[RMDB]
RNA sequence: GGGAACGACUCGAGUAGAGUCGAAAAGUACUGGUGCUGCCAGGGUUGAUUGCGUUUCAUCUGUAUCAGGAUUUACCGAAAGCCGAUAUGGCUUACCCGACGCUGGUCAAUAACGUUCUGCCAGUGCUCGAAUCAGGUUGUUCGCAACCUGAUUCGAAAAAGAAACAACAACAACAAC
Reactivity to DMS in 0.01 (KOAc 150mM, MgCl2 10mM, bicine 150mM(pH8.5), 24C), signal-to-noise 1, nucleotides 027 to 126: g030u000a070c030u000g000g040u000g000c120u000g020c130c030a090g000g020g060u000u000g000a070u000u010g020c120g020u000u000u010c160a110u000c060u000g000u010a100u000c160a140g040g000a080u000u010u000a090c110c050g000a030a060a020g000c000c000g020a090u000a090u000g040g020c020u000u010a060c080c070c010g010a050c100g000c010u020g010g000u000c150a050a050u000a070a130c180g000u010u000c040u010g000c010c000a020g020u000g010c070
An RNA of 177 nucleotides, treated with DMS and read out base by base. Source: RMDB library OK2TST, as collected in RNAgym. Reactivities are given for positions 27 through 126. The DMS profile rests on 985 reads. Conditions: 150 mM KOAc, 10 mM MgCl2 and 150 mM bicine (pH 8.5), 24 C.